The data come from the RNA Mapping Database (RMDB), library OK3TST. Chemical mapping of a 207-nucleotide RNA with DMS and 2A3. DMS adducts were read by reverse transcription with MarathonRT. For DMS, 5,990 sequencing reads were counted. The RNA was probed in 150 mM KOAc, 10 mM MgCl2 and 150 mM bicine (pH 8.5) at 24 C. For 2A3 the reverse transcriptase was SuperScript II with manganese.

RNA sequence: GGGAACGACUCGAGUAGAGUCGAAAAGGUAUCAAAGCGAACCAGGAAGUUAUCGUCGUCUUCUCGAAGCUCUCAUCAAGAAAAAAGAUAUUGACACCGUCGCAAUCGUCGAUCGAAUGAGAAAGGGACAGUUCUUUGCCGAAGAACGUAUCAUCGAGAUAUAGUGACCUUUCGAGGUCACUAUAUCAAAAGAAACAACAACAACAAC
Reactivity to DMS in 0.01 (KOAc 150mM, MgCl2 10mM, bicine 150mM(pH8.5), 24C), signal-to-noise 3, nucleotides 027 to 156: g030g030u000a070u000c040a080a050a150g000c070g030a100a080c020c050a110g000g020a100a120g020u020u000a070u010c070g010u000c030g010u000c010u010u020c010u000c010g030a090a130g000c030u000c020u000c020a130u000c070a070a140g030a010a060a040a060a100a120g010a090u010a080u000u000g010a120c010a090c020c030g000u010c030g020c060a050a080u000c070g030u000c060g000a100u010c030g020a050a100u010g010a050g010a020a090a100g000g010g000a050c040a060g020u000u000c030u000u000u000g000c090c070g020a090a070g000a050a030c040g000u010a070u000c040a130u000c060g020a300
Reactivity to 2A3 in 0.01 (KOAc 150mM, MgCl2 10mM, bicine 150mM(pH8.5), 24C), signal-to-noise 6, nucleotides 027 to 156: g060g000u070a050u210c100a090a080a020g050c050g070a030a040c010c010a030g070g050a060a070g050u150u130a100u100c040g050u020c040g030u020c030u060u020c010u030c030g040a060a010g010c000u010c010u010c020a120u040c060a050a050g150a200a100a030a010a010a010g090a040u120a100u060u130g020a060c030a030c100c050g070u070c020g000c040a030a060u070c050g080u010c010g030a040u050c040g040a070a060u110g010a070g080a040a050a020g020g010g040a020c030a030g010u020u000c000u050u050u100g100c040c060g030a020a000g010a030a010c010g030u060a070u100c070a040u100c050g070a040